[RMDB]
RNA sequence: GGGAACGACUCGAGUAGAGUCGAAAAGAAUGAAUAGUGGUGCCACGGCUCUGGAGCCGCUCCCGAGCCGCGGCUAACGCUAUCUGAAGGGCGGCUCCGAAAUAGAAGCGAGAAGAAGACUCGCAGAAGGAUACGCUGGAUUCGUCCAGCGUAUCCUAAAAGAAACAACAACAACAAC
Reactivity to 2A3 in 0.01 (KOAc 150mM, MgCl2 10mM, bicine 150mM(pH8.5), 24C), signal-to-noise 1, nucleotides 027 to 126: g030a030a070u300g030a000a000u060a000g000u050g060g190u300g000c000c000a000c000g010g060c010u010c070u140g000g010a010g010c000c020g070c000u130c000c000c000g000a000g000c000c000g000c000g000g000c000u000a000a000c110g000c000u030a000u000c010u060g010a030a130g020g080g000c000g000g030c000u000c000c050g040a030a030a000u090a150g050a090a000g020c010g000a000g010a180a000g040a040a000g000a030c000u000c000g050c020a000g020a070
Background
The record gives the reactivity of an RNA of 177 nucleotides to 2A3. The reactions ran in a buffer of 150 mM KOAc, 10 mM MgCl2 and 150 mM bicine (pH 8.5), at 24 C.